This 177-nucleotide RNA was probed chemically with 2A3 and DMS. It was measured as part of the RMDB library M2PK90. The RNA was probed in 150 mM KOAc, 10 mM MgCl2 and 150 mM bicine (pH 8.5) at 24 C. The 2A3 profile rests on 2,507 reads. DMS (dimethyl sulfate) methylates the pairing face of unpaired adenines and cytosines. For DMS, 1,591 sequencing reads were counted. DMS adducts were read by reverse transcription with MarathonRT. Values cover nucleotides 27 to 126.
RNA sequence: GGGAACGACUCGAGUAGAGUCGAAAAGAAAAUCCCAAGCAUAGCAUAGCAUAGCAUAGCAUAGCAUAGCAUAGCAUAGCAUAGCAUAGCAUAGCAUAGCAUAGCAUAGCUUAGCAUACAAAAAAAAUACCGCUAUAUCAUUCGUGAUAUAGCGGUAAAAAGAAACAACAACAACAAC
Reactivity to 2A3 in 0.01 (KOAc 150mM, MgCl2 10mM, bicine 150mM(pH8.5), 24C), signal-to-noise 2, nucleotides 027 to 126: g080a020a090a000a060u040c000c010c010a010a010g030c020a050u110a030g000c010a020u030a030g030c000a030u000a030g000c010a020u000a010g000c000a020u060a010g010c020a040u050a030g000c000a050u050a030g000c030a060u080a030g010c030a050u050a040g020c010a050u060a020g050c000a040u050a040g000c010a040u050a030g000c020a020u060a040g040c010a030u070a050g000c000u040u030a000g000c010a050u100a120c120a050a100a010a000a010a000a010a020
Reactivity to DMS in 0.01 (KOAc 150mM, MgCl2 10mM, bicine 150mM(pH8.5), 24C), signal-to-noise 2, nucleotides 027 to 126: g010a110a070a120a140u000c000c000c000a070a090g000c030a100u000a040g030c030a090u000a090g000c020a080u010a070g040c050a030u000a030g000c010a030u000a070g020c040a040u000a080g010c030a020u000a020g030c040a080u010a050g030c070a060u000a070g020c020a050u010a090g010c040a040u010a050g010c030a080u010a070g000c010a050u000a090g020c000a070u000a060g040c040u000u000a120g020c020a060u010a070c100a000a000a000a020a050a070a050a220